RNA sequence: GGGAACGACUCGAGUAGAGUCGAAAACGCGAUCCCGGACGGCGGUGGGUCGGGGUCACGCUCCUGGACCGGUCCCGGUGAGGUCCACGACUCCGAGGGAAUGCGCUGUCACGACUGCGGCUGUGUAGUCGGAGUGCUCAUUCGUGAGCACUCCGACAAAAGAAACAACAACAACAAC
Reactivity to 2A3 in 0.01 (KOAc 150mM, MgCl2 10mM, bicine 150mM(pH8.5), 24C), signal-to-noise 2, nucleotides 027 to 126: c030g000c020g040a020u020c010c000c000g010g050a020c010g020g120c020g050g110u080g100g140g000u060c000g000g000g000g040u040c050a040c120g060c000u100c000c020u000g110g030a060c030c060g020g050u110c000c020c030g000g060u100g050a100g000g020u020c000c000a090c020g020a020c020u000c010c000g020a070g050g110g010a090a100u210g050c000g000c060u000g010u060c010a010c060g050a000c000u050g020c000g050g000c010u040g020u050g070u190a060